RNA sequence: GGGAACGACUCGAGUAGAGUCGAAAAUUGUUAGCAUGCCUUUGGCUUUUACGCAAGUUUUAUCAGCAUGUAAUCAAUGGUUGCAAAGAUACGGCAUGCUUGCUCUGCUAUAAGAGGAACCGACUUACAGGCCGCUAGUUCGCUAGCGGCAAAAGAAACAACAACAACAAC
Reactivity to 2A3 in 0.01 (KOAc 150mM, MgCl2 10mM, bicine 150mM(pH8.5), 24C), signal-to-noise 2, nucleotides 027 to 129: u090u060g100u080u050a000g020c000a030u000g000c000c000u050u040u160g070g030c000u010u050u020u090a040c060g000c050a030a010g020u080u000u000u000a010u050c000a000g000c020a000u030g000u000a030a000u040c070a020a200u050g020g060u010u000g030c000a040a050a050g000a020u090a020c000g000g030c030a000u020g020c010u000u030g000c000u040c040u000g030c020u030a020u010a260a050g000a010g000g000a020a010c000c000g000a000c100u080u130a000c090a000g020
Reactivity to DMS in 0.01 (KOAc 150mM, MgCl2 10mM, bicine 150mM(pH8.5), 24C), signal-to-noise 3, nucleotides 027 to 129: u000u020g030u010u050a020g060c050a010u030g030c020c000u000u030u000g030g040c030u040u040u020u010a120c200g000c140a070a050g010u000u000u000u000a020u000c080a070g020c090a080u020g050u060a000a000u050c070a050a130u020g020g020u040u070g020c130a100a090a130g000a100u040a050c160g000g180c030a000u050g010c000u000u000g030c000u050c090u000g030c110u060a000u010a060a050g050a100g000g000a030a170c100c060g040a130c100u000u000a070c170a120g040